RNA sequence: GGGAACGACUCGAGUAGAGUCGAAAAACAGUGCUUACGAGCACUGAACACCAUUUUUGGCAAUGGUAGAACUCACACUGGUGAGGUAAUGGGAUCCGGUGGUUCUAGACUUGCCAACUAUGGUGAAGAUUGAUAUACCGUUCGCGGUAUAUCAAUCAAAAGAAACAACAACAACAAC
Reactivity to DMS in 0.01 (KOAc 150mM, MgCl2 10mM, bicine 150mM(pH8.5), 24C), signal-to-noise 5, nucleotides 027 to 126: a090c010a010g000u000g010c010u000u000a130c170g020a060g010c000a010c000u000g000a100a180c000a010c000c000a020u000u000u000u010u000g010g000c010a010a010u020g010g000u000a020g010a020a010c020u020c160a300c030a030c030u020g000g010u000g000a300g000g020u030a080a100u060g010g000g010a170u000c000c000g010g020u010g000g000u000u000c000u000a020g010a100c050u000u000g000c000c000a000a000c000u010a010u000g000g010u010g000a100a050
Reactivity to 2A3 in 0.01 (KOAc 150mM, MgCl2 10mM, bicine 150mM(pH8.5), 24C), signal-to-noise 9, nucleotides 027 to 126: a000c010a000g000u000g000c000u070u080a070c270g100a020g000c000a000c000u000g000a030a010c000a000c000c000a000u000u000u000u000u010g020g000c030a030a030u180g180g000u060a000g010a000a000c010u050c170a120c030a020c080u050g000g030u050g070a080g070g100u250a190a170u250g120g060g020a010u020c000c000g000g010u010g010g000u010u000c010u000a040g050a270c010u000u010g000c000c000a000a000c000u000a000u000g000g000u010g010a020a010